[RMDB]
Background: This 207-nucleotide RNA was probed chemically with 2A3. The reactions ran in a buffer of 150 mM KOAc, 10 mM MgCl2 and 150 mM bicine (pH 8.5), at 24 C. It was measured as part of the RMDB library OK3TST.

RNA sequence: GGGAACGACUCGAGUAGAGUCGAAAAGGGAUAAGAGAGUACUCUUAUCCCCACGUCGUUGGUGACAACGACGAUUAUUACGUACGCAUACGCCGGGCGUACGCUUACUCCACUCAACUGCUUCGGUACUUGUUUGGAGGAAGAUAACACGGCUAAAGGUGAUUACUCAUUUCGAUGAGUAAUCACCAAAAGAAACAACAACAACAAC
Reactivity to 2A3 in 0.01 (KOAc 150mM, MgCl2 10mM, bicine 150mM(pH8.5), 24C), signal-to-noise 4, nucleotides 027 to 156: g000g000g000a010u010a020a000g010a000g030a010g210u240a250c010u000c000u000u000a000u010c000c010c000c000a030c010g000u000c000g000u000u000g030g040u080g030a060c010a000a000c010g010a000c000g010a030u070u060a120u110u160a040c010g000u000a010c000g000c010a020u030a140c070g000c010c000g000g010g000c000g000u000a000c000g000c000u010u030a020c000u000c010c000a000c000u000c000a010a010c020u030g040c010u050u060c250g160g000u030a010c000u010u000g000u010u000u000g000g000a010g020g000a000a000g010a000u120a110a060c180a020c110g000g000c000u020a110a030a000